[RMDB]
RNA sequence: GGGAACGACUCGAGUAGAGUCGAAAAGAUAUGGAAUACGACCUUUAGGCGGAGCUAGGCUUGGACCAUGCCGUCGGAAACGACGGUCAUGCUAGCCUAGCUCCGCCUAAAGGGUAUUCCUAAGUCAGCAUAAUCAAUAGUUCGCUAUUGAUUAUGCAAAAGAAACAACAACAACAAC
Reactivity to DMS in 0.01 (KOAc 150mM, MgCl2 10mM, bicine 150mM(pH8.5), 24C), signal-to-noise 3, nucleotides 027 to 126: g000a080u010a300u000g000g000a010a000u000a000c010g020a280c010c000u000u000u000a000g010g010c000g010g000a030g030c010u000a020g000g010c000u000u010g030g020a090c300c030a010u000g000c010c000g000u000c000g020g010a140a090a290c020g010a000c000g020g000u020c030a000u000g000c040u000a030g000c000c010u000a010g000c010u000c010c000g000c000c000u000a000a000a000g010g000g000u000a000u000u000c000c000u000a040a130g010u000c050a210
The record gives the reactivity of an RNA of 177 nucleotides to DMS. The DMS profile rests on 4,863 reads. The RNA was probed in 150 mM KOAc, 10 mM MgCl2 and 150 mM bicine (pH 8.5) at 24 C. DMS (dimethyl sulfate) methylates the pairing face of unpaired adenines and cytosines.